[RMDB]
RNA sequence: GGGAACGACUCGAGUAGAGUCGAAAACGUGUAUUCGUACACGAAAAACCGUAGGGAUCGUUGUCAGCGAACGCGCAUCGACGAAGUUCGAAAGAGCAGAGAUGCGCGUUCGCUUGGAUUUACGAUCCCUAAACGGAAAAAUCGACUUCGGUCGAAAGCAAUAUUACUUGUUCGCAAGUAAUAUUGCAAAAGAAACAACAACAACAAC
Reactivity to DMS in 0.01 (KOAc 150mM, MgCl2 10mM, bicine 150mM(pH8.5), 24C), signal-to-noise 2, nucleotides 027 to 156: c030g070u000g050u000a030u000u010c290g010u000a030c000a010c000g010a060a020a130a030a160c000c000g040u040a050g030g010g000a000u000c000g020u000u010g030u000c010a090g040c030g030a000a000c000g000c000g040c000a030u000c000g030a300c100g010a190a290g010u000u000c000g010a190a110a230g000a020g000c020a050g000a300g000a050u000g000c000g010c000g000u000u000c000g000c020u000u000g020g000a020u000u000u000a010c040g000a020u000c000c000c000u000a000a020a050c020g000g000a030a030a070a100a170u000c000g040a010c000u000u000c270g060g000u000c000g010a020a090a220